[RMDB]
RNA sequence: GGGAACGACUCGAGUAGAGUCGAAAAUCUAAGAGCGUAACACACACUCAGACUGUACGACAGUCUGACACACUCAUACGCUAGUGUAUCGUGUGUGUGAUAUCGAUGUAGCACGAAAAUGAAAGAAAUAUUUGACCGAUUUCGAUCGGUCAAAUAUAAAAGAAACAACAACAACAAC
Reactivity to 2A3 in 0.01 (KOAc 150mM, MgCl2 10mM, bicine 150mM(pH8.5), 24C), signal-to-noise 3, nucleotides 027 to 126: u020c010u040a090a000g010a000g050c020g040u050a040a000c010a000c020a000c000a000c010u000c000a000g000a010c000u030g020u150a160c130g130a060c170a000g000u040c000u010g000a000c000a000c000a010c030u040c020a110u170a240c120g050c120u020a020g010u000g040u050a100u160c080g000u020g000u000g000u000g000u020g020a030u030a020u060c030g010a040u100g070u120a030g040c050a020c130g060a110a040a030a040u220g050a090a070a110g090a010a170
Reactivity to DMS in 0.01 (KOAc 150mM, MgCl2 10mM, bicine 150mM(pH8.5), 24C), signal-to-noise 4, nucleotides 027 to 126: u000c060u010a110a120g000a030g010c190g000u000a160a070c000a020c010a000c010a020c030u010c020a010g000a010c000u000g010u000a140c300g010a160c010a000g020u000c000u010g000a080c300a010c020a020c000u010c040a130u010a170c130g030c150u000a030g020u010g000u000a070u000c130g000u000g000u000g020u000g010u010g010a120u010a060u010c030g000a080u000g020u000a060g020c110a080c050g000a040a060a050a080u000g000a050a050a070g010a060a060